Source: RMDB libraries RFM100 and RFMREP, as collected in RNAgym. Structure probing data (DMS and 2A3) for a 177-nucleotide construct. Reactivities are rounded to 0.1 and cut off at 0 and 3.
[RMDB]
RNA sequence: GGGAACGACUCGAGUAGAGUCGAAAAUGAGCACAUAUGUUGGUACCCGAAAGAUGGUGAACUAUGCCUGAGUAGGGUGAAGCCAGGGGAAACUCUGGUGGAAGCUCGUAGCGAUUCUGACGUGCAACUCUAUUUUUGCGUUCGCGCAAAAAUAGAGAAAAGAAACAACAACAACAAC
Reactivity to DMS in 0.01 (KOAc 150mM, MgCl2 10mM, bicine 150mM(pH8.5), 24C), signal-to-noise 3, nucleotides 027 to 126: u020g000a030g000c040a110c060a060u020a060u030g010u010u000g020g010u010a040c010c000c020g000a100a170a150g000a110u020g000g010u000g010a060a120c160u040a100u010g020c000c010u000g000a150g010u010a260g010g000g020u000g000a210a170g000c000c020a000g030g000g000g000a130a070a160c000u000c010u010g000g020u010g000g000a110a120g010c000u000c020g000u070a090g000c060g010a120u010u000c020u000g000a110c000g010u000g000c060a080a180
Reactivity to 2A3 in 0.01 (KOAc 150mM, MgCl2 10mM, bicine 150mM(pH8.5), 24C), signal-to-noise 2, nucleotides 027 to 126: u130g010a000g030c060a000c020a130u190a040u200g100u000u040g000g010u010a020c000c000c010g030a040a020a010g230a050u170g000g040u030g020a230a060c070u080a130u300g010c000c000u020g030a010g040u050a080g000g000g000u020g010a000a000g010c010c000a000g000g000g000g000a020a020a010c000u000c000u000g000g000u000g000g000a030a000g010c000u000c050g020u030a030g080c030g010a000u020u030c000u060g060a060c060g020u090g000c000a030a000
About this RNA
DMS adducts were read by reverse transcription with MarathonRT. The reactions ran in a buffer of 150 mM KOAc, 10 mM MgCl2 and 150 mM bicine (pH 8.5), at 24 C.